Chemical mapping of a 207-nucleotide RNA with DMS and 2A3. For 2A3, 2,451 sequencing reads were counted. The reactions ran in a buffer of 150 mM KOAc, 10 mM MgCl2 and 150 mM bicine (pH 8.5), at 24 C. For DMS, 4,002 sequencing reads were counted.

RNA sequence: GGGAACGACUCGAGUAGAGUCGAAAACUAUCCGAGAUUUGGAAAGCAGCAUCGGGCUAGGGUUUAUGGGGUUGAGAUUCUUUCUCCCCUUGUUCCAUAGCCUCACCCAGUCCAUCCUUGGAGCCUUCUGCACAUACUGGGCUCUGGUGCGUGUCCACAUUAUCGAGGCAUUCGUGCCUCGAUAAUGAAAAGAAACAACAACAACAAC
Reactivity to DMS in 0.01 (KOAc 150mM, MgCl2 10mM, bicine 150mM(pH8.5), 24C), signal-to-noise 2, nucleotides 027 to 156: c050u000a090u000c010c000g040a110g000a100u010u000u000g040g010a090a130a120g000c090a130g010c010a070u000c000g020g030g020c010u000a040g020g030g030u000u000u000a060u000g020g020g030g060u010u000g000a030g050a030u000u000c210u000u000u010c000u000c000c000c010c000u010u000g010u000u000c030c020a060u010a020g000c020c020u010c060a070c020c030c000a110g010u000c030c020a080u010c060c030u000u000g060g010a110g010c040c030u010u020c040u000g040c070a150c110a140u000a050c040u000g020g020g020c010u000c060u000g000g000u000g020c030g000u010g020u020c010c030a230
Reactivity to 2A3 in 0.01 (KOAc 150mM, MgCl2 10mM, bicine 150mM(pH8.5), 24C), signal-to-noise 4, nucleotides 027 to 156: c040u040a050u080c030c050g090a090g020a200u070u110u140g040g020a090a080a030g020c060a000g000c010a020u040c030g020g000g010c000u010a040g020g070g020u050u100u110a080u140g020g020g030g000u180u290g040a020g010a080u210u120c070u170u250u010c010u040c010c000c000c000u010u040g020u020u030c020c000a000u020a010g000c000c010u030c000a030c000c020c010a010g050u040c010c010a040u040c030c050u040u070g020g010a030g020c020c030u130u110c070u150g060c080a030c000a080u220a090c060u070g000g010g000c000u030c030u070g010g000u010g000c050g010u020g020u010c020c010a040